[RMDB]
RNA sequence: GGGAACGACUCGAGUAGAGUCGAAAAAGAUCGGCGACCUUGAUCUGUUCAAGCUCGGAGAGGGGUAACGUCGUCUGAGAUUGGUCGAAGAGAUGAACCUGAGGCGCAUCGUUCUUGGCCUCGAUGGCCCUUAGGUAGAAUUCGUUCUACCUAAGGGAAAAGAAACAACAACAACAAC
Reactivity to 2A3 in 0.01 (KOAc 150mM, MgCl2 10mM, bicine 150mM(pH8.5), 24C), signal-to-noise 9, nucleotides 027 to 126: a000g030a070u120c030g010g000c010g030a110c010c000u010u020g010a020u000c010u010g020u080u160c120a140a070g060c070u060c050g020g000a020g010a010g040g040g010g010u050a140a050c020g020u020c010g010u000c030u020g060a080g020a090u120u170g050g010u040c050g070a060a020g020a020g010a060u060g030a030a030c010c050u130g080a090g080g000c070g000c060a040u030c030g100u100u010c030u040u050g030g010c020c000u010c040g050a120u110g130g040
Reactivity to DMS in 0.01 (KOAc 150mM, MgCl2 10mM, bicine 150mM(pH8.5), 24C), signal-to-noise 9, nucleotides 027 to 126: a040g010a030u000c020g030g010c030g020a110c040c020u000u000g000a220u000c050u000g010u000u010c180a090a130g010c190u010c020g000g010a100g000a300g000g000g000g010u010a040a070c050g020u000c020g010u000c010u000g000a110g000a110u000u000g010g010u000c010g000a080a080g000a150g000a040u000g010a050a080c040c030u010g010a070g010g030c240g000c100a050u000c030g010u010u000c030u000u010g010g000c010c010u000c070g000a130u000g010g000